[RMDB]
RNA sequence: GGGAACGACUCGAGUAGAGUCGAAAAGAUAUGGAUAUCAGUCGACGAUGAAACUGUGCUAAGCGUACUAUUUCGGAAACGAAAUAGUACGGAAACGCACAGUGGAGUCGUCUGAUAUCCUAAGUCACUAUUAAGGUACCUUCGGGUACCUUAAUAGAAAAGAAACAACAACAACAAC
Reactivity to DMS in 0.01 (KOAc 150mM, MgCl2 10mM, bicine 150mM(pH8.5), 24C), signal-to-noise 4, nucleotides 027 to 126: g010a020u000a120u020g000g000a020u000a000u000c000a000g030u000c010g010a010c000g010a120u020g000a150a190a030c000u000g010u000g010c000u000a180a170g010c020g000u010a010c000u000a000u000u000u010c000g000g000a040a020a080c000g010a000a010a000u000a010g010u000a010c010g000g000a040a090a130c300g000c000a000c000a010g000u000g000g000a040g020u000c000g010u000c000u010g010a010u000a000u000c000c000u010a000a050g000u010c010a300
Reactivity to 2A3 in 0.01 (KOAc 150mM, MgCl2 10mM, bicine 150mM(pH8.5), 24C), signal-to-noise 2, nucleotides 027 to 126: g010a010u020a010u070g010g000a010u010a000u020c010a000g030u020c000g000a010c000g240a300u030g020a020a010a010c000u000g010u010g010c010u150a300a190g300c000g010u000a010c010u000a010u000u000u010c010g000g010a000a020a010c000g000a000a000a000u000a000g000u010a000c010g020g000a030a050a000c040g000c000a010c000a000g020u000g000g020a010g010u000c000g010u000c000u010g000a000u000a010u020c000c000u010a000a000g020u000c010a000